[RMDB]
RNA sequence: GGGAACGACUCGAGUAGAGUCGAAAAACGAACGCCUUUUGUUUAGUUAAUUGGUAAAUCAGCCAUGUGUCCACAGUGCCGAACAUCAGGUCGUUCUCCUCAUACGCCUUGGUACACAGAGGCUCAAAGUGGGAUGCCUAUUCGUAGGCAUCCCACUAAAAGAAACAACAACAACAAC
Reactivity to 2A3 in 0.01 (KOAc 150mM, MgCl2 10mM, bicine 150mM(pH8.5), 24C), signal-to-noise 1, nucleotides 027 to 126: a000c110g000a080a000c000g080c000c000u000u150u000u070g000u000u030u000a260g010u070u080a000a180u150u080g000g020u050a120a160a210u130c000a000g070c000c000a000u010g000u000g020u000c090c000a130c060a060g090u030g100c090c090g000a000a070c020a010u160c090a010g000g080u090c110g000u000u000c030u000c010c000u020c000a010u090a110c010g000c000c000u080u110g110g060u120a050c070a000c000a000g060a070g000g000c000u020c130a080a130
Annotation:
An RNA of 177 nucleotides, treated with 2A3 and read out base by base. The reactions ran in a buffer of 150 mM KOAc, 10 mM MgCl2 and 150 mM bicine (pH 8.5), at 24 C. Reactivities are rounded to 0.1 and cut off at 0 and 3. It was measured as part of the RMDB library OK1LIB.